The record gives the reactivity of an RNA of 177 nucleotides to DMS and 2A3. The RNA was probed in 150 mM KOAc, 10 mM MgCl2 and 150 mM bicine (pH 8.5) at 24 C. 2A3 adducts were read by reverse transcription with SuperScript II with manganese. For DMS the reverse transcriptase was MarathonRT. For DMS, 1,521 sequencing reads were counted.

RNA sequence: GGGAACGACUCGAGUAGAGUCGAAAACUUCAUUACUACAGCGCAAGUCUACCAUUACCACACCCACACACAGAUAUUACGGCUAAUGUUUAUUAGUCAAGUUUCCAUGAGCUCACUCUUUAUUCUUAUCAUUGGACUAGUUCGCUAGUCCAAUGAUAAAAGAAACAACAACAACAAC
Reactivity to DMS in 0.01 (KOAc 150mM, MgCl2 10mM, bicine 150mM(pH8.5), 24C), signal-to-noise 2, nucleotides 027 to 126: c060u010u060c090a070u030u020a110c090u050a110c020a050g050c060g020c010a070a180g020u020c000u000a060c100c070a120u030u000a050c070c040a060c090a130c000c000c000a000c060a000c040a070c000a080g000a170u040a070u040u000a120c170g010g030c000u050a000a000u010g000u020u010u020a050u000u000a000g020u010c000a030a040g080u010u020u000c000c060a110u020g020a050g010c020u000c060a050c010u020c040u000u000u000a010u040u060c010u000u000
Reactivity to 2A3 in 0.01 (KOAc 150mM, MgCl2 10mM, bicine 150mM(pH8.5), 24C), signal-to-noise 6, nucleotides 027 to 126: c030u120u080c020a080u050u130a050c030u020a030c010a030g000c010g000c110a100a000g020u030c020u030a030c010c020a050u040u080a060c030c010a020c020a010c030c030c000a020c000a010c000a000c010a030g090a040u070a040u150u200a060c060g010g000c000u000a020a000u040g080u200u170u240a040u010u010a020g000u010c020a040a060g020u030u050u000c050c030a080u090g040a030g020c020u020c030a030c010u020c000u050u100u050a100u140u020c030u010u020